RNA sequence: GGGAACGACUCGAGUAGAGUCGAAAAAGUUGCCAACGACGACAACUACGCUCUAGCUGCUUAAUGCGGCUAGCAGUCGCUAGGGGAUGCCUGUAAACCCGAAACGACUGUCAGAUAGAACAGGAUCGCCGCCAAGUUCGCUGUAGACGUAACGGCUCAUCAAAGAAUUGUUCGCAAUUCUUUGAUGAAAAGAAACAACAACAACAAC
Reactivity to DMS in 0.01 (KOAc 150mM, MgCl2 10mM, bicine 150mM(pH8.5), 24C), signal-to-noise 2, nucleotides 027 to 156: a060g000u000u010g020c000c000a090a190c130g030a160c010g040a000c010a000a020c020u000a100c080g020c000u020c030u010a030g010c010u000g010c010u000u030a130a180u020g030c020g010g040c000u010a020g000c000a020g000u000c000g010c020u000a300g010g010g000g020a100u010g010c090c010u010g000u000a060a110a250c010c030c000g010a150a040a030c000g010a020c000u010g010u000c040a110g000a210u000a030g030a070a050c010a090g000g010a110u000c040g000c020c000g060c010c020a080a250g010u000u010c070g000c020u010g000u000a120g010a060c060g000u000a100a160c000g000g000c080u010
Reactivity to 2A3 in 0.01 (KOAc 150mM, MgCl2 10mM, bicine 150mM(pH8.5), 24C), signal-to-noise 5, nucleotides 027 to 156: a000g050u020u030g010c030c020a120a030c140g170a030c040g020a020c020a050a010c030u130a050c070g040c070u030c010u040a000g000c000u010g000c010u110u250a180a050u300g000c000g010g000c000u000a000g000c000a000g000u000c000g000c060u020a030g010g010g010g000a010u080g030c020c020u010g030u050a070a090a070c000c000c000g000a010a020a000c000g000a000c000u000g020u030c020a010g050a160u170a030g070a060a020c000a000g020g010a040u100c060g000c000c000g000c010c010a040a010g020u020u050c050g010c210u120g050u170a040g010a020c010g020u020a010a000c010g000g000c000u000